[RMDB]
RNA sequence: GGGAACGACUCGAGUAGAGUCGAAAAUCUUAUCACUUGUCACAGUAUCAUUACAAAAUGUUGUGGUUCCUUUUGAUAAUUAUUGCAACUUGGAUGCACGUUAUCACAAUAUUACUGUUCAGAGUGACUAAUAUUUCCUAUUCGUAGGAAAUAUUAGAAAAGAAACAACAACAACAAC
Reactivity to 2A3 in 0.01 (KOAc 150mM, MgCl2 10mM, bicine 150mM(pH8.5), 24C), signal-to-noise 9, nucleotides 027 to 126: u030c000u030u070a040u070c000a000c020u030u070g050u100c040a010c000a020g010u020a030u130c060a090u060u250a100c060a070a250a060a090u130g040u090u040g020u030g030g040u040u070c020c010u080u190u080u070g080a080u090a240a080u140u170a130u160u170g000c020a040a040c080u100u160g160g050a040u060g060c020a010c070g030u020u020a020u030c010a000c010a030a030u060a030u120u050a010c010u010g000u030u040c040a020g010a000g070u000g000a010
Reactivity to DMS in 0.01 (KOAc 150mM, MgCl2 10mM, bicine 150mM(pH8.5), 24C), signal-to-noise 9, nucleotides 027 to 126: u010c030u000u000a180u000c010a010c010u000u000g000u010c150a030c010a010g010u000a030u000c120a060u010u010a100c190a100a110a090a060u000g010u010u000g020u000g010g010u000u000c030c020u000u000u000u000g000a040u000a020a030u000u000a110u000u000g000c010a020a070c100u010u010g020g010a120u000g010c020a050c300g000u000u000a010u000c010a030c180a030a050u000a070u010u000a020c010u000g010u000u010c180a200g000a010g010u000g000a090

The record gives the reactivity of an RNA of 177 nucleotides to 2A3 and DMS. Reactivities are given for positions 27 through 126. For DMS, 21,569 sequencing reads were counted. Source: RMDB library OK2TST, as collected in RNAgym.